[RMDB]
RNA sequence: GGGAACGACUCGAGUAGAGUCGAAAAGCUUCAUCGAAAAAUGUGCCCGUUUCUUCGAUAAACUCGCGGACGGCCGUUUCGUAAUCGAAAACAUCUUGACCAUCGCGCUUGCCUCGCGGUAUAGAGAUUUUUUCGAGAAAAUUUGCGCGUUGCAACGGAUUCGUACAUCAUUCGUGAUGUACGAAUCAAAAGAAACAACAACAACAAC
Reactivity to 2A3 in 0.01 (KOAc 150mM, MgCl2 10mM, bicine 150mM(pH8.5), 24C), signal-to-noise 2, nucleotides 027 to 156: g030c030u170u100c080a120u120c050g050a030a020a070a110a150u100g050u200g040c060c020c030g020u080u120u000c030u060u060c000g000a020u070a090a260a100c040u030c020g000c040g000g010a000c000g000g020c010c010g010u010u030u000c020g010u040a040a100u020c000g000a000a000a000a000c000a010u000c000u000u040g000a020c030c000a010u000c010g000c010g010c080u090u190g110c030c050u020c000g000c000g010g010u000a010u020a010g000a000g000a000u000u020u000u000u000u000c020g000a020g070a010a110a000a030u110u120u180g030c100g010c020g020u020u080g000c040a040a070c030g050
Reactivity to DMS in 0.01 (KOAc 150mM, MgCl2 10mM, bicine 150mM(pH8.5), 24C), signal-to-noise 1, nucleotides 027 to 156: g000c050u030u000c070a130u010c040g000a060a060a010a050a060u020g000u010g010c080c040c060g030u000u000u000c090u000u000c000g000a140u010a070a110a050c060u010c000g000c270g020g000a140c070g000g090c010c000g000u000u000u000c020g030u020a110a200u020c020g010a030a000a070a030c050a050u000c030u000u000g000a230c300c080a010u010c020g040c010g050c100u000u000g000c140c140u010c050g030c030g030g000u000a020u000a300g020a010g020a010u000u000u000u000u000u000c000g020a020g000a040a040a060a160u000u010u010g050c030g050c140g000u000u010g030c020a030a280c110g020
An RNA of 207 nucleotides, treated with 2A3 and DMS and read out base by base. Source: RMDB library OK3TST, as collected in RNAgym.